[RMDB]
RNA sequence: GGGAACGACUCGAGUAGAGUCGAAAACGAGCCUCGUUCGCGAGGCUCGAAAGGCGGCGAAAGCUCGACAAAAUGUCGAAAGUGUAACGCCAAUCCCACACAAAAGGCUGCCGUUCGCGGCAGCCAAGUAUGCAAUACAGUUCGCUGUAUUGCAUACAAAAGAAACAACAACAACAAC
Reactivity to 2A3 in 0.01 (KOAc 150mM, MgCl2 10mM, bicine 150mM(pH8.5), 24C), signal-to-noise 3, nucleotides 027 to 126: c000g000a010g010c000c000u000c020g040u040u020c040g000c010g090a010g010g000c000u000c000g010a010a010a000g010g000c040g020g030c060g040a050a030a020g030c000u010c010g000a010c010a080a300a120a070u240g010u000c010g020a120a060a020g110u130g030u130a090a010c020g020c000c010a000a020u020c010c050c000a000c000a000c000a000a140a000a020g010g000c000u000g000c000c020g040u070u100c270g000c000g080g000c010a000g000c020c000a000a000
Reactivity to DMS in 0.01 (KOAc 150mM, MgCl2 10mM, bicine 150mM(pH8.5), 24C), signal-to-noise 4, nucleotides 027 to 126: c020g030a040g010c000c000u000c010g010u000u010c200g040c010g020a010g010g010c020u000c010g000a000a060a140g000g000c080g020g000c020g010a100a100a130g010c060u000c000g010a010c010a110a110a130a120u020g000u010c000g000a040a090a100g000u010g000u010a090a170c010g020c000c000a110a160u010c010c010c000a110c190a110c210a090a090a130a100g000g010c000u010g030c000c000g020u000u010c190g010c000g010g010c010a000g000c000c000a000a030